[RMDB]
RNA sequence: GGGAACGACUCGAGUAGAGUCGAAAAGCCACUUACGGACACUCCGUCUGACCUACAGUCUCACUCGCAUGACUAGUCAAAGUCAUGACUGUGAGCGAGUAGGACUGAUGGUCAGUUCGAGUGUGGAGCACCUGGCGGUGUUCGCACCGCCAGGUGCAAAAGAAACAACAACAACAAC
Reactivity to 2A3 in 0.01 (KOAc 150mM, MgCl2 10mM, bicine 150mM(pH8.5), 24C), signal-to-noise 1, nucleotides 027 to 126: g030c000c010a040c100u130u170a110c100g160g010a010c000a000c010u070c040c100g020u020c000u000g010a010c000c000u080a160c030a010g000u040c000u020c030a000c000u000c000g000c010a120u170g050a240c040u050a000g010u000c000a140a180a010g170u160c030a100u050g000a000c010u020g020u000g030a020g020c030g000a000g000u050a070g000g020a000c000u010g010a020u020g020g000u020c000a020g000u000u080c010g020a040g030u040g000u010g090g010a050
An RNA of 177 nucleotides, treated with 2A3 and read out base by base. For 2A3, 880 sequencing reads were counted. Source: RMDB library OK2TRN, as collected in RNAgym. The reactions ran in a buffer of 150 mM KOAc, 10 mM MgCl2 and 150 mM bicine (pH 8.5), at 24 C.